[RMDB]
RNA sequence: GGGAACGACUCGAGUAGAGUCGAAAAGAAUGAGAAGAUGGUUAUACCUACAGAGUUUCCUGCAUGAAUUAAGUUCCCUGCUAAAGUGGGAUAAACAGUUCAGCCAUUUCCAGCACUGGCUUCUACCAUUGAGGAUGCAAGCAGGAAAGAGGGGAGAUAAUGCACUAAUGUUCGCAUUAGUGCAUUAAAAAGAAACAACAACAACAAC
Reactivity to DMS in 0.01 (KOAc 150mM, MgCl2 10mM, bicine 150mM(pH8.5), 24C), signal-to-noise 4, nucleotides 027 to 156: g020a120a150u000g010a110g010a060a100g020a100u010g010g000u000u000a140u000a100c060c010u020a130c040a070g010a120g000u000u000u000c010c000u010g020c020a130u000g010a060a060u000u000a090a210g030u000u000c000c000c000u010g020c090u000a060a120a130g030u010g020g000g030a080u000a040a090a100c060a080g020u000u000c040a070g020c010c020a080u010u000u000c050c080a170g030c090a100c140u000g040g000c010u010u000c040u000a080c030c020a120u000u000g000a170g000g010a080u000g000c030a060a110g040c030a020g020g000a030a030a050g000a140g020g010g020g020a110g010a160
Reactivity to 2A3 in 0.01 (KOAc 150mM, MgCl2 10mM, bicine 150mM(pH8.5), 24C), signal-to-noise 4, nucleotides 027 to 156: g040a030a030u160g010a040g020a080a040g030a030u060g000g020u150u070a070u070a180c000c030u040a040c040a030g100a070g040u020u050u010c000c010u010g020c020a060u130g020a090a050u150u050a060a020g020u010u020c000c010c010u040g040c060u130a050a080a060g060u060g010g020g020a020u120a020a100a020c070a010g030u090u080c050a000g000c030c020a070u040u090u070c030c030a010g020c050a050c060u020g020g000c000u180u060c030u060a040c020c020a030u040u090g040a030g060g030a010u040g010c020a090a040g020c010a000g030g000a000a020a000g030a010g000g000g010g010a070g000a010

This 207-nucleotide RNA was probed chemically with DMS and 2A3. Reactivities are given for positions 27 through 156. For DMS the reverse transcriptase was MarathonRT.